[RMDB]
RNA sequence: GGGAACGACUCGAGUAGAGUCGAAAAUCGAGGAGUGGAAGGCGGGGAGGAGGGGGCUGAGGGCUAACCUACGGAAAUUCCUGAGCUCCCCUGACGUCCAGGCCGUCCCCUCUCCGAGUGAAGGGAGAACGGGUACCGUUCGCGGUACCCAAAAGAAACAACAACAACAAC
Reactivity to 2A3 in 0.01 (KOAc 150mM, MgCl2 10mM, bicine 150mM(pH8.5), 24C), signal-to-noise 6, nucleotides 027 to 129: u060c010g010a020g000g000a030g000u080g020g020a050a050g010g020c070g010g030g010g000a020g020g010a040g000g000g000g000g000c020u040g110a040g010g020g000c020u030a050a090c010c010u110a060c090g020g020a080a030a040u090u020c010c000u020g050a000g000c010u220c000c000c000c010u030g040a060c030g100u000c010c010a030g060g020c020c010g040u050c010c010c000c000u020c010u000c000c010g010a030g040u120g050a040a050g020g020g010a040g020a040a030c070